Chemical mapping of a 207-nucleotide RNA with 2A3.
[RMDB]
RNA sequence: GGGAACGACUCGAGUAGAGUCGAAAAGCUGAGCCCGAAGCGGCCCCUGACCCUGACUUUACUGAUAUUAGGCGCCUGACAUCAUCCAGAUUUACAGAGGUGGAUGGCCGUGUUAGGGUUAGCCGUUUUGGGGCCCGUGCCGGGGUCCGCACCCGUACGAGGUAAACUACUUCGGUAGUUUACCUCGAAAAGAAACAACAACAACAAC
Reactivity to 2A3 in 0.01 (KOAc 150mM, MgCl2 10mM, bicine 150mM(pH8.5), 24C), signal-to-noise 1, nucleotides 027 to 156: g020c000u000g010a020g070c000c000c000g000a080a010g060c020g020g000c050c000c000c000u020g040a020c010c050c000u010g040a050c050u170u220u290a040c030u060g140a140u170a180u300u110a100g140g000c110g050c060c010u080g050a030c020a030u220c000a000u000c100c020a080g110a300u120u150u160a150c090a050g060a090g130g000u040g000g080a100u120g000g020c020c110g040u020g000u020u000a020g010g000g050u000u020a030g060c020c020g050u040u060u180u160g000g020g040g020c000c080c000g020u040g070c060c000g010g010g020g100u020c020c050g030c000a060c000c000c020g000u010a060